[RMDB]
RNA sequence: GGGAACGACUCGAGUAGAGUCGAAAAGGAAUUAAAGCUUUUACCUGACUUUACUAUAGUAUCUAUAUUUACUAUAGAUUCUUUACAAUGAUCUGCAUCUAUUUUUGUUUCUCCAUUUACCAAUAAUAUUAUAUGCGCUAUUCGUAGCGCAUAUAAUAAAAGAAACAACAACAACAAC
Reactivity to 2A3 in 0.01 (KOAc 150mM, MgCl2 10mM, bicine 150mM(pH8.5), 24C), signal-to-noise 3, nucleotides 027 to 126: g040g040a020a040u210u170a230a100a000g080c010u120u070u050u190a110c020c000u110g100a190c030u200u300u080a040c000u020a020u010a080g000u000a000u000c050u060a180u020a230u300u110u100a030c030u010a010u000a000g000a010u010u000c020u040u220u070a080c060a120a120u170g060a090u030c010u080g020c030a030u040c060u110a160u080u100u030u040u040g060u000u060u000c030u050c070c010a040u000u050u130a120c040c020a060a030u060a210a050u000